[RMDB]
RNA sequence: GGGAACGACUCGAGUAGAGUCGAAAAUGGUAACAACUGGCUAACUUGUUACGCAGCAACUGCCAUGCAAUGCUGUUGAAAAAACAAGUGGGGUUUGUCGAGUUCGCGUAAUUCGAACAGUCUUGUCUUCUGACGAUAAAUGAAGACUACGCACGUAUCUUCAUAGCCUGUUCGCAGGCUAUGAAGAAAAAGAAACAACAACAACAAC
Reactivity to DMS in 0.01 (KOAc 150mM, MgCl2 10mM, bicine 150mM(pH8.5), 24C), signal-to-noise 1, nucleotides 027 to 156: u020g020g050u010a060a100c020a050a050c050u010g030g000c110u000a090a090c020u000u000g010u000u000a090c100g010c090a010g000c000a090a110c130u000g040c000c040a040u010g000c050a100a170u000g000c000u000g020u020u010g020a000a010a150a080a030a050c030a000a130g000u010g030g030g000g030u000u000u000g000u000c030g010a080g020u000u000c020g020c110g040u000a080a130u010u000c080g000a020a050c050a160g000u010c000u010u000g000u000c010u000u000c000u000g000a060c040g000a120u010a040a030a000u000g020a010a020g020a040c010u000a010c110g010c050a100c060g000u000a140
Reactivity to 2A3 in 0.01 (KOAc 150mM, MgCl2 10mM, bicine 150mM(pH8.5), 24C), signal-to-noise 2, nucleotides 027 to 156: u130g030g010u020a030a000c020a060a030c090u080g180g000c060u150a090a010c070u050u020g000u000u030a000c040g020c000a000g000c000a010a080c020u030g000c020c040a060u150g000c000a030a030u020g000c000u020g000u130u220g050a040a040a010a000a000a000c010a000a010g010u020g000g010g010g020u020u040u060g040u020c010g010a010g000u000u000c000g000c000g160u200a020a030u040u030c010g000a040a000c000a000g000u020c000u000u010g000u010c000u000u000c000u000g000a050c030g200a300u010a020a000a010u020g000a000a000g020a000c000u030a020c050g060c040a010c120g030u050a070